Chemical mapping of a 177-nucleotide RNA with 2A3 and DMS. For 2A3 the reverse transcriptase was SuperScript II with manganese. Reactivities are given for positions 27 through 126. It was measured as part of the RMDB library OK2TRN. The reactions ran in a buffer of 150 mM KOAc, 10 mM MgCl2 and 150 mM bicine (pH 8.5), at 24 C.

RNA sequence: GGGAACGACUCGAGUAGAGUCGAAAAUGGCCGCAUUGAUCGCGUUCUUCGUCUUGGCGAUAGCCAGCGCUGGGCCGGCCAACAGCCGUGAGAUCAACUUGUCCACCUCGGCAUCGAAGUCGGCGGCCCAUGAUUAUUUCUUCGGAAAUAAUCAUGGAAAAGAAACAACAACAACAAC
Reactivity to 2A3 in 0.01 (KOAc 150mM, MgCl2 10mM, bicine 150mM(pH8.5), 24C), signal-to-noise 8, nucleotides 027 to 126: u070g030g010c000c000g030c060a060u020u130g040a050u080c030g000c030g070u040u020c010u030u030c010g100u030c090u090u140g040g010c020g140a170u100a090g020c010c010a020g000c020g000c040u050g010g030g000c020c000g020g010c010c020a060a050c040a040g000c010c010g050u090g070a150g010a050u090c040a050a100c070u100u130g020u040c020c010a050c030c030u040c030g000g000c000a030u100c060g050a080a020g040u050c020g040g010c000g030g000c040
Reactivity to DMS in 0.01 (KOAc 150mM, MgCl2 10mM, bicine 150mM(pH8.5), 24C), signal-to-noise 9, nucleotides 027 to 126: u010g010g010c010c010g020c060a220u000u000g000a040u000c040g020c120g010u000u000c020u000u000c020g010u010c050u010u010g050g030c010g010a160u010a120g010c020c020a040g000c050g010c090u000g000g010g020c010c020g010g020c010c030a060a100c200a150g000c020c010g010u000g000a110g010a050u000c070a050a090c170u000u010g010u010c030c040a110c110c040u000c040g010g000c030a090u010c110g000a110a120g000u000c050g010g010c020g000g000c050